[RMDB]
RNA sequence: GGGAACGACUCGAGUAGAGUCGAAAAGGGGUCGACGUCUCUAGCGUGACUCGCGAAACGCUGUUGUCAGCACUGAAGCCUCCACGGUGCUUGGAUUUACAGCGGAGAGUUCGGGCGUCGACGGAGGCACCCAAAUCGUACGCUUCGGCGUACGAAACCAUUAUGGCAUGUUCGCAUGCCAUAAUGGAAAAGAAACAACAACAACAAC
Reactivity to DMS in 0.01 (KOAc 150mM, MgCl2 10mM, bicine 150mM(pH8.5), 24C), signal-to-noise 1, nucleotides 027 to 156: g000g000g000g000u000c000g050a000c060g000u010c000u000c050u000a140g020c170g010u000g010a040c040u040c000g010c130g000a060a000a130c040g040c000u000g000u000u000g010u000c030a070g070c010a000c000u000g000a030a130g000c040c010u010c010c010a300c030g020g000u000g020c000u000u010g040g030a110u000u000u000a060c030a050g090c000g000g010a110g010a060g020u010u000c030g010g010g010c050g060u000c010g000a030c070g020g050a020g060g070c030a120c020c000c000a060a200a190u010c000g000u010a010c010g020c020u000u010c270g080g010c010g000u000a000c000g000a010a070a160
Reactivity to 2A3 in 0.01 (KOAc 150mM, MgCl2 10mM, bicine 150mM(pH8.5), 24C), signal-to-noise 5, nucleotides 027 to 156: g080g000g020g010u020c000g000a000c010g030u010c040u010c070u260a110g090c070g180u250g070a040c020u050c030g030c080g070a090a130a010c030g000c010u040g030u260u160g060u120c040a010g000c000a000c000u010g030a120a000g010c010c000u000c000c000a010c020g000g000u010g010c000u100u220g130g030a090u220u230u220a110c010a010g000c020g020g010a060g000a000g040u070u170c090g000g000g010c000g000u000c000g000a000c000g000g000a000g000g010c000a030c000c000c000a030a110a020u030c000g000u000a000c000g000c000u040u070c260g120g000c000g000u000a000c000g010a010a000a000
The data come from the RNA Mapping Database (RMDB), library RNAMAK. The record gives the reactivity of an RNA of 207 nucleotides to DMS and 2A3. DMS adducts were read by reverse transcription with MarathonRT. Conditions: 150 mM KOAc, 10 mM MgCl2 and 150 mM bicine (pH 8.5), 24 C.